[RMDB]
RNA sequence: GGGAACGACUCGAGUAGAGUCGAAAAGAUGAGAACAUACUGUUCAGUUGGGCAAUCAGGUGACACUCCAAGUCUUGCAGGAGGUCACGAGCAAGAGAAAGAGGACGGCCUGACUUAACAAAAGAAAAUGCAUAGGGUCAUUCGUGACCCUAUGCAUAAAAGAAACAACAACAACAAC
Reactivity to 2A3 in 0.01 (KOAc 150mM, MgCl2 10mM, bicine 150mM(pH8.5), 24C), signal-to-noise 3, nucleotides 027 to 126: g170a040u230g010a040g050a100a020c030a090u160a050c060u020g000u000u000c020a030g000u000u000g000g000g000c030a070a160u060c020a120g120g070u000g020a020c070a100c140u000c000c020a040a070g080u030c070u090u200g080c050a050g000g010a020g000g020u020c000a000c000g010a030g000c050a100a030g020a020g030a100a110a000g120a050g020g040a020c000g030g000c000c000u000g000a000c000u000u010a000a000c010a000a160a010a000g190a040a060a020
Reactivity to DMS in 0.01 (KOAc 150mM, MgCl2 10mM, bicine 150mM(pH8.5), 24C), signal-to-noise 2, nucleotides 027 to 126: g020a050u010g010a120g010a020a030c030a110u000a090c130u030g000u000u000c090a030g010u010u000g010g000g000c140a110a110u000c040a040g020g010u020g000a070c030a190c020u000c000c020a020a150g000u010c080u000u010g000c120a170g050g000a020g000g000u000c040a010c010g010a110g010c080a030a110g030a030g010a040a280a120g000a070g000g000a060c300g020g030c000c000u000g010a000c080u030u070a000a000c010a010a010a130a120g000a070a070a090

An RNA of 177 nucleotides, treated with 2A3 and DMS and read out base by base. The reactions ran in a buffer of 150 mM KOAc, 10 mM MgCl2 and 150 mM bicine (pH 8.5), at 24 C. For 2A3 the reverse transcriptase was SuperScript II with manganese. The data come from the RNA Mapping Database (RMDB), library OK1LIB. For DMS, 2,474 sequencing reads were counted.